[RMDB]
RNA sequence: GGGAACGACUCGAGUAGAGUCGAAAAUGGGCUUAAAGGGUGCGUAGGCGGCCUGUUAAGUAGGGCGUGAAAUCUGUCGGCUCAACCGGCAAAUUGCGUUCUAAACUGGCAGGCUUGAGUGGGUCAGACGCACACAAGUUUUCGAACUUGUGUGCGUAAAAGAAACAACAACAACAAC
Reactivity to DMS in 0.01 (KOAc 150mM, MgCl2 10mM, bicine 150mM(pH8.5), 24C), signal-to-noise 2, nucleotides 027 to 126: u030g020g000g020c130u010u030a060a020a040g020g000g000u010g000c090g030u000a050g020g000c040g000g000c010c030u010g000u000u010a000a010g020u000a040g000g000g000c010g000u000g010a020a030a060u000c060u000g010u000c030g020g000c140u080c300a160a260c000c000g000g020c000a010a000a060u000u000g000c030g020u020u000c000u000a000a000a030c010u000g000g000c000a030g000g020c000u030u000g000a100g020u000g000g020g000u040c130a100g030
Reactivity to 2A3 in 0.01 (KOAc 150mM, MgCl2 10mM, bicine 150mM(pH8.5), 24C), signal-to-noise 2, nucleotides 027 to 126: u070g010g000g050c100u230u230a070a050a070g060g000g000u080g030c040g070u120a010g000g110c020g000g020c010c000u010g000u000u000a050a050g010u000a000g000g010g010c000g010u020g140a020a030a020u040c050u020g000u020c000g000g000c000u000c300a030a210c020c000g000g000c000a020a020a020u000u070g000c000g010u010u000c000u010a020a020a020c000u000g000g070c000a000g000g020c010u000u000g000a010g000u080g000g000g000u010c010a010g010